[RMDB]
RNA sequence: GGGAACGACUCGAGUAGAGUCGAAAAGAUUGGUCGCAAUUAAAAGGCCAGACGACGAAUAUAUAGCGAAGCUUAUCAAAUUGUUUUAGCUACCCUCGCUGCAGUUUGUGCAGCUUGUAAAUUGUCGGGCUUUCUUAUUAUUCGUAAUAAGAAAGCCAAAAGAAACAACAACAACAAC
Reactivity to 2A3 in 0.01 (KOAc 150mM, MgCl2 10mM, bicine 150mM(pH8.5), 24C), signal-to-noise 3, nucleotides 027 to 126: g090a030u060u070g000g040u010c030g040c110a080a090u150u240a190a190a100a100g030g010c000c000a000g070a020c050g000a010c000g010a030a020u100a010u040a020u050a150g030c020g020a040a000g020c050u120u060a060u230c060a070a090a160u130u040g010u000u100u050u020a010g000c000u040a100c020c030c020u010c050g000c000u000g000c000a070g090u100u300u300g110u090g000c000a000g000c020u000u010g000u000a030a080a080u070u040g010u010c000g020
Reactivity to DMS in 0.01 (KOAc 150mM, MgCl2 10mM, bicine 150mM(pH8.5), 24C), signal-to-noise 3, nucleotides 027 to 126: g010a130u000u010g010g010u000c010g040c120a160a130u020u010a060a120a150a210g000g000c000c010a020g000a300c030g000a020c010g000a060a080u000a070u010a100u000a000g020c020g010a030a080g000c010u000u010a090u000c200a080a070a090u010u000g020u000u000u010u010a110g000c020u000a090c090c040c020u010c120g000c000u000g000c000a050g010u010u000u010g020u000g000c040a070g010c010u000u000g020u000a050a050a070u010u000g010u000c060g020
Chemical mapping of a 177-nucleotide RNA with 2A3 and DMS. For 2A3 the reverse transcriptase was SuperScript II with manganese. The reactions ran in a buffer of 150 mM KOAc, 10 mM MgCl2 and 150 mM bicine (pH 8.5), at 24 C. It was measured as part of the RMDB library OK2TRN. For 2A3, 2,066 sequencing reads were counted.